Chemical mapping of a 177-nucleotide RNA with 2A3 and DMS. Conditions: 150 mM KOAc, 10 mM MgCl2 and 150 mM bicine (pH 8.5), 24 C. DMS adducts were read by reverse transcription with MarathonRT.

RNA sequence: GGGAACGACUCGAGUAGAGUCGAAAAAGUCAGAAUCCGUGCUAGAUACAAUGACCUUGUCCCGCGCAUUUACCGUUGUGUCGAAAUAAGGCGUAAGCCUGUGAACCAUUAUAAGCGAUUGAUUGUGGCUCUAAUAACCUUUCGAGGUUAUUAGAGCAAAAGAAACAACAACAACAAC
Reactivity to 2A3 in 0.01 (KOAc 150mM, MgCl2 10mM, bicine 150mM(pH8.5), 24C), signal-to-noise 3, nucleotides 027 to 126: a010g100u060c030a000g100a050a020u000c000c020g020u080g030c040u080a030g010a150u080a110c060a030a110u040g010a070c000c010u030u120g050u050c030c010c000g030c010g000c030a060u100u050u130a050c020c040g010u030u000g040u020g060u030c040g020a060a070a110u120a090a030g010g010c020g070u050a010a120g030c000c000u040g000u000g020a020a020c040c020a050u010u100a060u100a220a090g090c130g110a190u050u110g090a150u030u100g100u030g090
Reactivity to DMS in 0.01 (KOAc 150mM, MgCl2 10mM, bicine 150mM(pH8.5), 24C), signal-to-noise 7, nucleotides 027 to 126: a050g000u010c020a050g000a130a060u010c040c050g000u010g000c100u030a090g010a060u020a050c130a090a090u020g010a060c030c040u000u000g010u000c010c010c000g020c110g010c070a070u020u010u010a060c100c040g020u000u000g010u010g000u000c040g000a100a080a060u020a050a010g000g000c010g000u030a100a080g000c010c000u000g010u000g010a090a090c060c040a080u020u020a080u000a080a090g010c060g010a100u000u010g000a100u010u000g010u010g010